[RMDB]
RNA sequence: GGGAACGACUCGAGUAGAGUCGAAAAUUGGGCACUUGGACACCUCUGCUAGAACAUUUAGUAGACGCUGACAAUUCCAAGCUAAUGUAAAAGCCAAGUCUGGAGGGUCAUGGGGUGGGAGACUAGGCAUGAAUCCAUCUUUCGAGAUGGAUUCAUGAAAAGAAACAACAACAACAAC
Reactivity to DMS in 0.01 (KOAc 150mM, MgCl2 10mM, bicine 150mM(pH8.5), 24C), signal-to-noise 2, nucleotides 027 to 126: u000u000g010g000g000c090a150c020u000u000g020g000a060c120a060c020c080u000c000u000g000c010u010a050g010a190a150c230a150u010u010u000a000g010u000a030g010a030c130g000c160u000g020a100c100a070a100u010u000c000c000a020a050g000c050u020a050a100u000g020u010a100a020a050a050g020c020c020a070a060g000u000c110u000g010g040a140g000g000g000u010c130a100u010g010g000g010g010u030g020g010g010a090g000a050c070u000a020g010g000
Reactivity to 2A3 in 0.01 (KOAc 150mM, MgCl2 10mM, bicine 150mM(pH8.5), 24C), signal-to-noise 2, nucleotides 027 to 126: u080u010g010g010g030c080a010c070u000u030g020g020a000c000a010c000c010u030c010u000g000c000u020a010g000a300a090c090a300u110u170u000a020g000u020a000g000a010c040g090c140u060g000a060c030a050a190u090u030c000c010a030a000g030c000u080a040a020u220g060u190a130a040a000a040g040c020c020a060a000g130u070c120u090g040g010a040g030g050g000u090c090a160u090g020g000g050g030u250g000g030g000a010g030a050c040u030a000g060g080